An RNA of 177 nucleotides, treated with 2A3 and DMS and read out base by base. In probing experiments dimethyl sulfate is read out at A N1 and C N3, which are open when not base-paired. It was measured as part of the RMDB library OK1LIB. Values cover nucleotides 27 to 126.

[RMDB]
RNA sequence: GGGAACGACUCGAGUAGAGUCGAAAAAGGAAAUGCUGGCGACGCAGGGCUGAGGCACAACUUUGAUGUGGGGCCUCUUGGUAGUGGGCCAAGUGGUUCUAAUUAUUUUCAGAACUUUCUCUUGCAGUAAAUGACCUCGUUUCGACGAGGUCAUUUAAAAAGAAACAACAACAACAAC
Reactivity to 2A3 in 0.01 (KOAc 150mM, MgCl2 10mM, bicine 150mM(pH8.5), 24C), signal-to-noise 2, nucleotides 027 to 126: a000g240g050a000a140a000u100g030c040u030g020g000c000g030a040c010g000c060a060g020g140g000c000u170g030a150g000g110c050a040c000a060a140c090u150u170u240g040a050u110g020u030g080g000g000g020c000c020u000c000u000u000g090g040u020a150g060u190g050g120g030c000c000a000a010g030u050g010g040u000u000c000u020a130a090u160u230a120u070u100u030u110c040a040g000a140a040c000u090u230u020c050u010c040u040u130g000c020a040g030
Reactivity to DMS in 0.01 (KOAc 150mM, MgCl2 10mM, bicine 150mM(pH8.5), 24C), signal-to-noise 1, nucleotides 027 to 126: a030g000g020a120a100a070u000g000c050u000g000g020c000g010a060c120g000c070a060g020g000g000c010u000g000a090g000g000c070a050c060a140a070c120u000u010u000g040a100u010g000u060g000g000g000g000c010c030u030c000u000u020g010g000u030a100g000u000g000g000g000c010c010a020a050g030u000g000g000u000u000c000u020a050a030u040u010a110u000u010u000u030c090a070g030a000a130c070u020u060u000c020u000c040u000u000g040c130a090g000

For DMS the reverse transcriptase was MarathonRT. High 2A3 reactivity points to a flexible backbone, as in loops and unpaired stretches.